The data come from the RNA Mapping Database (RMDB), library OK2TRN. Chemical mapping of a 177-nucleotide RNA with DMS. The reactions ran in a buffer of 150 mM KOAc, 10 mM MgCl2 and 150 mM bicine (pH 8.5), at 24 C.
RNA sequence: GGGAACGACUCGAGUAGAGUCGAAAAUUCAGGUUCUAAAUUCAAGUGUUGUCAUAAUGAUGAUUGCUCCACAACAGGACUGCUUGCUUCUCCUCCACAUUUGGAUAGAGUAACCGGUUACAAUCAAUAUUAGCUACGCAUUCGUGCGUAGCUAAUAAAAAGAAACAACAACAACAAC
Reactivity to DMS in 0.01 (KOAc 150mM, MgCl2 10mM, bicine 150mM(pH8.5), 24C), signal-to-noise 1, nucleotides 027 to 126: u000u000c050a100g050g020u000u020c010u010a100a090a050u000u010c110a040a050g010u000g010u000u000g010u000c060a130u020a100a130u000g010a100u000g000a120u000u000g030c050u010c050c050a010c070a110a090c180a090g000g000a040c110u000g030c040u010u000g000c040u000u000c020u000c040c030u010c030c080a050c060a020u000u010u020g010g020a070u000a000g000a120g000u000a040a010c000c010g000g010u000u000a100c180a050a100u000c070a070a110